[RMDB]
An RNA of 177 nucleotides, treated with DMS and 2A3 and read out base by base. The reactions ran in a buffer of 150 mM KOAc, 10 mM MgCl2 and 150 mM bicine (pH 8.5), at 24 C. 2A3 adducts were read by reverse transcription with SuperScript II with manganese. DMS adducts were read by reverse transcription with MarathonRT. Source: RMDB library TTRDEL, as collected in RNAgym. For 2A3, 1,656 sequencing reads were counted.
RNA sequence: GGGAACGACUCGAGUAGAGUCGAAAAGAUAUGGAAGAACGCUAGCUCAUAUGCAGAAUUCGGAAACGAAAGCAUACUAGAGCUUGGACCGUUCUUCCUAAGUCAAACGCGUCGUUCGCGACGCGAAGCAGAAAAUAUCCUUCGGGAUAUUUUCUGCAAAAGAAACAACAACAACAAC
Reactivity to DMS in 0.01 (KOAc 150mM, MgCl2 10mM, bicine 150mM(pH8.5), 24C), signal-to-noise 1, nucleotides 027 to 126: g000a070u000a300u000g000g000a020a010g010a010a000c000g000c000u000a010g000c000u000c030a180u000a000u000g000c000a140g030a090a210u000u000c020g010g000a070a120a120c020g090a000a100a170g010c000a020u030a000c300u030a060g000a010g000c000u000u000g030g000a030c300c040g000u000u000c000u010u000c000c000u000a000a110g000u000c040a080a080a080c060g020c000g020u000c000g020u000u000c150g080c000g010a030c000g010c000g000a000a060
Reactivity to 2A3 in 0.01 (KOAc 150mM, MgCl2 10mM, bicine 150mM(pH8.5), 24C), signal-to-noise 1, nucleotides 027 to 126: g020a020u070a020u090g000g030a020a000g010a020a000c000g000c030u000a000g030c020u000c000a040u000a000u010g010c000a020g300a290a170u140u030c010g030g020a080a050a040c010g010a020a030a050g000c000a000u040a050c070u200a260g010a000g000c020u010u040g030g100a030c070c020g000u000u000c000u000u000c000c000u000a030a010g030u000c030a090a110a000c030g000c000g010u000c000g020u060u080c190g000c020g150a000c000g000c000g020a050a030